[RMDB]
RNA sequence: GGGAACGACUCGAGUAGAGUCGAAAACGAAUGGAGUUCGCUCCAUUCGAAAUCCCAGGCAACGACUCGAGUAGAGUCGAAAAUCCCACUCAACUCAACUCAAAAGCGAAUGCUUCGGCAUUCGCAACAUACGAUUAGGGUUCGCCCUAAUCGUAUGAAAAGAAACAACAACAACAAC
Reactivity to 2A3 in 0.01 (KOAc 150mM, MgCl2 10mM, bicine 150mM(pH8.5), 24C), signal-to-noise 2, nucleotides 027 to 126: c010g000a010a000u000g010g000a000g000u050u070c110g120c070u000c000c000a010u010u010c000g010a020a010a000u000c000c000c000a020g020g010c000a010a010c010g010a000c000u000c010g010a010g030u050a010g020a000g000u000c000g000a010a000a000a000u020c010c000c010a020c010u060c010a030a090c010u030c080a010a060c020u040c110a080a080a060a010g000c000g000a010a000u000g000c000u020u050c080g090g000c000a000u000u000c000g000c000a000a000
Reactivity to DMS in 0.01 (KOAc 150mM, MgCl2 10mM, bicine 150mM(pH8.5), 24C), signal-to-noise 3, nucleotides 027 to 126: c020g010a010a000u000g000g010a020g010u000u010c250g000c000u000c000c000a010u000u010c000g000a010a080a170u010c000c010c010a100g000g000c000a030a030c010g000a010c040u000c020g000a050g000u000a050g000a000g000u000c000g010a010a010a040a040u000c010c010c010a130c040u000c060a050a070c040u010c090a100a060c060u000c090a080a060a120a060g010c000g010a010a020u000g010c000u000u010c150g040g000c000a000u000u010c010g010c000a020a030
Chemical mapping of a 177-nucleotide RNA with 2A3 and DMS. 2A3 adducts were read by reverse transcription with SuperScript II with manganese. The RNA was probed in 150 mM KOAc, 10 mM MgCl2 and 150 mM bicine (pH 8.5) at 24 C. Source: RMDB library M2PK50, as collected in RNAgym.